[RMDB]
RNA sequence: GGGAACGACUCGAGUAGAGUCGAAAAACUGCGGUAUUCGUACCGCAGUACAUAAAAAGGAUAAAAUACCAGUAGCCCGAAACGCUAGCGAGCACUACUGGCGCAAGAACCACUUCGGUGGUUCUAACGUAUUACCCUGAUUCGUCAGGGUAAUACGAAAAGAAACAACAACAACAAC
Reactivity to 2A3 in 0.01 (KOAc 150mM, MgCl2 10mM, bicine 150mM(pH8.5), 24C), signal-to-noise 5, nucleotides 027 to 126: a000c000u010g010c000g010g000u020a030u010u080c140g050u050a020c000c000g010c000a000g000u020a010c000a000u300a020a120a000a010a020g140g030a080u170a190a180a060a030u170a110c010c010a010g010u010a010g030c000c030c060g060a120a140a010c080g010c070u020a040g150c050g260a010g030c030a020c060u010a000c000u020g000g000c030g010c040a050a020g010a010a010c000c000a000c030u050u060c180g080g000u000g000g000u000u000c000u000a000a010
Reactivity to DMS in 0.01 (KOAc 150mM, MgCl2 10mM, bicine 150mM(pH8.5), 24C), signal-to-noise 4, nucleotides 027 to 126: a050c000u000g020c010g000g000u000a010u010u010c160g020u000a000c000c000g020c000a000g000u000a020c160a060u010a060a050a090a120a080g020g010a130u020a060a060a100a100u000a140c000c010a030g010u000a020g000c070c030c020g020a060a090a080c140g000c100u000a050g010c070g010a130g020c100a210c040u000a020c000u010g000g010c110g010c170a090a020g000a020a000c000c000a000c000u010u020c210g020g030u000g010g010u000u000c000u010a030a110